[RMDB]
RNA sequence: GGGAACGACUCGAGUAGAGUCGAAAAGGGGUCUCGACAUGGACAAAAAGUAGGCGUUGAAAUAUACUGAAGCCUCCACGGUAUAUGGAGCCUAUACAAAGUCCAACAGCGAGACGGAGGCACCCAAAAGCAUGUAUGGCUUCGGCCAUACAUGCAAGAAUUUAUGCUAGUUCGCUAGCAUAAAUUCAAAAGAAACAACAACAACAAC
Reactivity to DMS in 0.01 (KOAc 150mM, MgCl2 10mM, bicine 150mM(pH8.5), 24C), signal-to-noise 1, nucleotides 027 to 156: g070g010g000g040u010c020u000c010g030a080c050a270u020g030g020a040c040a060a120a090a210a300g030u000a000g010g020c000g020u020u020g010a060a120a040u000a020u010a010c000u000g000a030a130g000c000c000u000c010c010a270c000g030g010u010a020u000a020u000g000g010a200g000c000c040u010a030u000a160c140a110a150a120g000u000c010c010a030a120c100a160g040c000g020a000g010a020c050g000g030a000g140g030c000a130c000c020c010a010a070a120a260g020c000a000u000g040u000a000u000g040g040c000u010u000c300g080g010c000c000a020u000a020c000a020u000g000c000a030a000
Reactivity to 2A3 in 0.01 (KOAc 150mM, MgCl2 10mM, bicine 150mM(pH8.5), 24C), signal-to-noise 4, nucleotides 027 to 156: g030g010g060g040u030c000u010c020g040a050c130a270u300g020g000a030c070a040a210a040a030a040g050u020a010g010g000c050g060u140u020g000a000a000a000u000a000u000a000c000u010g030a120a020g000c000c000u000c000c000a000c000g000g000u000a000u000a000u020g000g010a000g010c000c010u010a000u020a000c030a010a100a020g000u000c010c030a200a030c040a040g040c000g010a000g000a000c010g010g000a000g010g000c010a020c000c010c010a020a110a010a030g000c010a000u000g000u000a000u000g000g000c010u080u090c300g060g000c000c000a000u000a000c000a000u000g000c000a000a010